An RNA of 177 nucleotides, treated with 2A3 and DMS and read out base by base. 2A3 adducts were read by reverse transcription with SuperScript II with manganese. Values cover nucleotides 27 to 126.
[RMDB]
RNA sequence: GGGAACGACUCGAGUAGAGUCGAAAAGAUAUGGAUCCACCCUUUUGACGAAGGGGAGGGUCGGAAACGACCUGAAAGACUUCGAUAAGGUUGGAUCCUAAGUCAAAGCACCUCUUCGGAGGUGCAAUCACCCUACACUCUUCGGAGUGUAGGGUGAAAAAGAAACAACAACAACAAC
Reactivity to 2A3 in 0.01 (KOAc 150mM, MgCl2 10mM, bicine 150mM(pH8.5), 24C), signal-to-noise 1, nucleotides 027 to 126: g070a020u110a030u100g000g000a010u000c000c000a040c020c000c000u010u040u060u240g270a200c070g040a010a000g090g090g000g000a130g040g000g000u020c010g030g050a020a010a000c000g010a010c000c000u000g090a030a120a050g300a060c000u020u000c040g070a090u020a110a000g010g010u030u020g030g000a000u000c000c020u010a030a000g010u010c030a000a150a070g030c090a000c000c000u000c020u050u030c130g120g000a010g000g000u010g010c000a000a000
Reactivity to DMS in 0.01 (KOAc 150mM, MgCl2 10mM, bicine 150mM(pH8.5), 24C), signal-to-noise 1, nucleotides 027 to 126: g030a010u000a300u000g000g010a000u000c010c000a010c160c000c010u040u010u010u000g030a220c140g000a000a010g010g000g000g010a210g000g000g040u000c000g080g030a060a060a200c000g000a000c000c010u000g000a110a060a160g010a210c030u010u000c050g000a090u000a000a010g000g010u000u000g000g010a030u000c000c000u000a000a030g010u010c050a080a140a150g030c020a010c000c000u000c000u000u000c190g020g010a040g000g010u030g000c000a000a030